[RMDB]
RNA sequence: GGGAACGACUCGAGUAGAGUCGAAAACGUUUCAGGCCUGAUGCAUCACGAUAUUCUGACCGGAAGCGCAAAGUCUUUUGCUGAUUUAAACGUGCAGGUUGAGCAACUCAGCAAGCGUUGUUCAGAGGCUUUUGGCUCAUAUGGCCGUUAAAGCCUCGACUGAAUCUCUAUUCGUAGAGAUUCAGUCAAAAGAAACAACAACAACAAC
Reactivity to 2A3 in 0.01 (KOAc 150mM, MgCl2 10mM, bicine 150mM(pH8.5), 24C), signal-to-noise 4, nucleotides 027 to 156: c030g010u010u020u040c020a040g000g040c030c030u030g010a040u060g010c040a100u100c090a040c070g030a040u080a070u260u040c040u030g050a070c000c030g020g040a020a020g000c040g030c100a110a060a060g100u120c010u050u140u050u040g020c000u010g020a080u080u090u290a150a170a060c090g010u060g020c060a060g130g010u090u080g020a020g010c010a000a060c000u030c040a020g010c040a070a010g080c070g070u000u000g010u020u020c000a010g000a000g020g000c000u000u000u020u080g030g000c030u070c180a140u190a210u300g020g000c000c000g010u000u070a020a010a000g010c000c000u000c000
Reactivity to DMS in 0.01 (KOAc 150mM, MgCl2 10mM, bicine 150mM(pH8.5), 24C), signal-to-noise 1, nucleotides 027 to 156: c060g000u010u010u000c030a070g000g050c000c020u000g000a090u020g010c030a200u010c100a180c190g020a170u010a050u010u000c010u010g030a050c030c010g020g020a040a080g000c040g060c060a070a080a210g000u000c050u000u000u000u000g020c030u000g000a160u020u000u000a060a030a090c080g010u000g000c040a060g040g040u020u000g040a120g020c020a060a070c150u000c010a070g050c070a040a040g000c070g000u010u000g000u010u000c050a070g000a020g030g030c020u030u000u000u000g020g000c020u000c160a180u000a090u000g000g030c000c010g050u000u000a030a030a020g000c000c010u010c000